RNA sequence: GGGAACGACUCGAGUAGAGUCGAAAAAACAUCAUCAAACACCAACAACACGGUCGGGCUGCCUUGCUGAGGGGUGGAUUGGUGGGUAGGAUAGCCAGUGAGUUUCUGAGCGUCGACGAUGGGCUGGCUUCUCUAGGGAGUUCGCUCCCUAGAGAAGAAAAGAAACAACAACAACAAC
Reactivity to DMS in 0.01 (KOAc 150mM, MgCl2 10mM, bicine 150mM(pH8.5), 24C), signal-to-noise 3, nucleotides 027 to 126: a050a020c100a070u040c070a030u040c060a070a080a110c090a100c040c040a100a060c120a070a030c120a060c100g000g020u000c030g010g020g000c080u010g000c040c010u010u020g040c090u000g020a130g040g000g000g000u030g000g000a050u020u010g020g000u010g000g000g000u020a030g000g020a060u010a050g010c000c010a040g040u020g000a140g020u000u030u010c020u000g000a100g010c030g010u000c040g010a060c090g010a100u010g000g000g000c000u000g000g000
Reactivity to 2A3 in 0.01 (KOAc 150mM, MgCl2 10mM, bicine 150mM(pH8.5), 24C), signal-to-noise 4, nucleotides 027 to 126: a000a000c100a110u150c020a030u080c050a030a060a040c030a030c040c020a050a040c020a100a000c020a070c080g060g050u040c070g040g000g000c050u100g030c020c020u050u070g020c060u070g040a030g020g020g030g010u090g030g040a140u020u070g030g030u060g030g000g000u000a040g030g060a170u070a070g040c010c000a020g020u020g060a040g030u030u030u080c020u020g020a040g030c020g050u100c010g050a030c020g040a050u080g050g040g000c010u010g020g000